[RMDB]
Structure probing data (DMS and 2A3) for a 177-nucleotide construct. High 2A3 reactivity points to a flexible backbone, as in loops and unpaired stretches. 2A3 adducts were read by reverse transcription with SuperScript II with manganese. DMS adducts were read by reverse transcription with MarathonRT.
RNA sequence: GGGAACGACUCGAGUAGAGUCGAAAAUUGGCGGUGCAGUGCAGGCGGUGCUAAUUGCCAUCAAUGUGAUGAUGUACCUGCCGUUUAUGAAGAUAAGCGAGAAUAUCGAACGGAAGAUGGCGCAACAGGGAAUAAGUGAGUUCGCUCACUUAUUCCCAAAAGAAACAACAACAACAAC
Reactivity to DMS in 0.01 (KOAc 150mM, MgCl2 10mM, bicine 150mM(pH8.5), 24C), signal-to-noise 3, nucleotides 027 to 126: u000u000g020g000c020g010g040u010g000c040a040g030u010g020c100a060g030g010c060g000g000u020g000c070u000a080a160u000u000g070c010c020a030u000c050a030a300u040g000u000g010a170u000g000a030u000g000u000a080c150c030u000g030c150c000g000u000u000u000a040u010g010a140a070g000a000u000a020a020g000c010g000a130g000a140a120u010a010u010c010g020a280a050c010g000g020a290a130g000a020u000g010g000c020g010c130a030a060c160a140
Reactivity to 2A3 in 0.01 (KOAc 150mM, MgCl2 10mM, bicine 150mM(pH8.5), 24C), signal-to-noise 2, nucleotides 027 to 126: u050u040g000g000c000g060g030u050g000c030a020g050u040g070c080a030g040g070c020g030g080u050g040c010u020a110a140u130u150g000c020c010a000u030c030a020a060u090g020u030g020a160u050g010a000u030g020u060a100c010c030u050g070c050c000g010u050u000u000a040u020g120a050a060g060a160u000a020a000g020c030g010a000g010a070a000u070a010u050c020g020a000a020c030g020g040a090a090g000a100u030g000g040c010g000c030a030a020c030a100